[RMDB]
RNA sequence: GGGAACGACUCGAGUAGAGUCGAAAACAACUGGUAUCGGCGAAGGUAUUGCUAUUCCACAUGCGAAAGUAGCCGCAGUUAAGUCUCCAGCUAUCGCAUUCGGUAAAUCUAAAGAAGGUGUAGAUUACCUCGGGAAUGGGUUCGCCCAUUCCCGAGGAAAAGAAACAACAACAACAAC
Reactivity to 2A3 in 0.01 (KOAc 150mM, MgCl2 10mM, bicine 150mM(pH8.5), 24C), signal-to-noise 1, nucleotides 027 to 126: c080a000a010c000u080g010g000u180a120u160c000g000g020c000g060a080a050g080g000u300a090u100u220g070c000u060a000u080u050c000c060a100c060a200u060g070c000g070a080a000a000g040u000a000g030c030c000g070c000a000g000u000u150a200a000g050u000c000u000c020c000a010g000c010u100a020u080c000g000c000a000u010u010c140g010g000u120a250a170a000u000c050u090a060a200a160g220a110a060g000g000u080g010u020a080g000a000u060u060a040